Conditions: 150 mM KOAc, 10 mM MgCl2 and 150 mM bicine (pH 8.5), 24 C. The record gives the reactivity of an RNA of 207 nucleotides to 2A3 and DMS. The 2A3 profile rests on 1,591 reads. Source: RMDB library M2RFPK, as collected in RNAgym.
RNA sequence: GGGAACGACUCGAGUAGAGUCGAAAAACAUAGGCCAUGCUUACGAGCAUGGCCUAUGACGAAUCUCUAGCAAUCAAGCAUUCUACUUCUAUUGCAACACUGAGGAGCUUACGAGCUCCUCAGUGAAAAAAGAGAGUAAUGUUCGCAUUACUCUCAACAUACAGAGAACGUUCGCGUUCUCUGUAUGAAAAGAAACAACAACAACAAC
Reactivity to 2A3 in 0.01 (KOAc 150mM, MgCl2 10mM, bicine 150mM(pH8.5), 24C), signal-to-noise 2, nucleotides 027 to 156: a000c000a010u000a000g010g000c000c010a010u000g000c000u150u120a120c250g120a010g000c000a010u010g000g030c010c000u010a000u000g000a000c000g040a030a050u030c030u020c020u040a040g000c030a020a080u070c030a080a010g020c030a170u170u030c050u110a080c030u040u060c040u090a040u010u060g010c020a070a040c000a040c010u000g010a000g010g000a000g000c000u070u060a090c210g050a010g000c000u000c000c000u000c000a000g000u000g000a000a000a010a000a000a000g000a010g000a000g000u000a000a010u010g020u030u110c230g000c120a000u010u000a000c000u000c000u000c000a000a000
Reactivity to DMS in 0.01 (KOAc 150mM, MgCl2 10mM, bicine 150mM(pH8.5), 24C), signal-to-noise 2, nucleotides 027 to 156: a100c010a000u000a000g010g010c010c000a000u000g010c020u030u010a160c300g020a100g090c040a010u010g000g020c000c010u000a010u000g000a080c080g000a080a150u010c030u000c030u000a130g010c020a150a090u010c100a110a100g000c040a140u000u000c090u000a030c000u000u000c040u010a110u010u000g030c020a110a230c010a040c000u010g020a030g000g020a020g010c010u010u010a160c240g000a060g010c030u000c000c000u000c010a010g050u000g010a000a020a030a100a060a110g000a010g010a040g030u000a000a010u010g010u000u020c300g010c000a040u020u000a020c000u020c000u000c000a050a050